[RMDB]
RNA sequence: GGGAACGACUCGAGUAGAGUCGAAAAAGGAAGAGAACCAUAUCAAAUCAUGCCAGGGCAUAUUAAGGUGCCACAUCGAGAUGAUUUAAUUGGCCUUGAAGCAGCUUACAAAAAGUUCGGUGGUGGCUCACCGCCCUGGAUUCGUCCAGGGCGGUGAAAAAGAAACAACAACAACAAC
Reactivity to DMS in 0.01 (KOAc 150mM, MgCl2 10mM, bicine 150mM(pH8.5), 24C), signal-to-noise 1, nucleotides 027 to 126: a040g000g000a050a100g010a030g000a060a170c030c000a040u000a070u000c070a030a090a110u000c060a050u020g000c040c080a090g000g000g020c000a030u000a140u000u090a100a120g000g000u000g000c000c010a060c070a010u010c140g010a100g000a090u000g000a060u000u000u000a130a060u010u010g000g010c030c000u000u070g030a070a140g000c090a030g000c040u000u000a000c230a010a070a020a150a130g000u010u000c080g010g030u000g000g030u010g000g000c050
Reactivity to 2A3 in 0.01 (KOAc 150mM, MgCl2 10mM, bicine 150mM(pH8.5), 24C), signal-to-noise 2, nucleotides 027 to 126: a000g120g010a030a060g100a010g000a020a020c050c000a030u060a130u170c100a000a000a060u130c010a000u130g030c070c000a050g010g040g000c020a040u040a040u260u220a180a000g070g040u040g000c000c000a070c000a000u130c030g010a010g000a020u030g010a040u000u000u120a180a180u050u060g010g000c020c000u010u110g020a050a000g100c110a010g000c100u070u050a020c070a040a100a000a010a000g080u040u000c010g000g050u080g010g070u030g000g020c050